The record gives the reactivity of an RNA of 177 nucleotides to DMS.
The RNA was probed in 150 mM KOAc, 10 mM MgCl2 and 150 mM bicine (pH 8.5) at 24 C.
Source: RMDB library TTRINS, as collected in RNAgym.
[RMDB]
RNA sequence: GGGAACGACUCGAGUAGAGUCGAAAAGAUAUGGAUUUACCAGAACUACUACGUUAGGCAACAGCGUAUGGAUCGGAAACGAUCUUUACGACAUGCCUUUCGUAGUAGUUCUGGUAAAUCCUAAGUCGGUACUAGUAUACUUCGGUAUACUAGUACCAAAAGAAACAACAACAACAAC
Reactivity to DMS in 0.01 (KOAc 150mM, MgCl2 10mM, bicine 150mM(pH8.5), 24C), signal-to-noise 4, nucleotides 027 to 126: g010a080u000a300u010g000g010a000u000u000u000a000c000c000a020g000a010a000c000u000a000c010u000a010c000g020u000u000a010g020g020c010a030a110c300a230g000c010g020u000a010u000g000g010a010u010c010g010g000a100a080a300c010g000a010u000c000u000u000u000a010c000g010a050c110a200u000g000c000c000u000u000u000c010g020u000a010g010u000a000g000u000u000c000u000g000g010u000a000a000a000u000c000c000u000a000a050g010u010c100